Source information:
Source: RMDB library OK1LIB, as collected in RNAgym. The record gives the reactivity of an RNA of 177 nucleotides to DMS and 2A3. 2A3 adducts were read by reverse transcription with SuperScript II with manganese. The RNA was probed in 150 mM KOAc, 10 mM MgCl2 and 150 mM bicine (pH 8.5) at 24 C. The DMS profile rests on 33,196 reads.

RNA sequence: GGGAACGACUCGAGUAGAGUCGAAAAGGACAAUAGUCCAACGAUAGAAACAGGAUAAGCUAUACGCACGAACGGAAAGAGACGAUUACGGUAGCGAGUAGCAUUGCCAUGCAGUAAUGCAGUCGUGGUAUGUACAAAGUUUCGACUUUGUACAUACAAAAGAAACAACAACAACAAC
Reactivity to DMS in 0.01 (KOAc 150mM, MgCl2 10mM, bicine 150mM(pH8.5), 24C), signal-to-noise 9, nucleotides 027 to 126: g010g010a010c020a160a120u040a070g010u000c000c000a110a080c070g010a050u020a070g010a090a070a080c150a030g000g000a060u020a060a110g010c030u000a020u010a120c050g010c040a060c040g000a070a070c060g010g000a060a020a070g010a080g010a070c040g010a080u010u010a060c030g000g000u020a070g000c010g010a300g030u000a060g010c010a050u000u000g000c000c020a110u020g010c070a040g000u040a040a030u010g000c010a070g000u000c030g000u000g010
Reactivity to 2A3 in 0.01 (KOAc 150mM, MgCl2 10mM, bicine 150mM(pH8.5), 24C), signal-to-noise 9, nucleotides 027 to 126: g010g000a030c050a070a300u110a130g000u000c000c000a000a010c010g010a010u030a080g140a030a100a010c040a010g040g010a040u030a080a030g000c010u020a010u030a060c010g010c010a020c020g020a080a010c010g000g060a060a050a010g050a010g020a030c010g050a050u030u100a050c010g030g020u030a020g020c000g010a020g030u050a010g000c040a040u010u120g010c010c010a030u170g020c020a020g020u100a070a010u030g000c000a000g020u010c010g020u020g040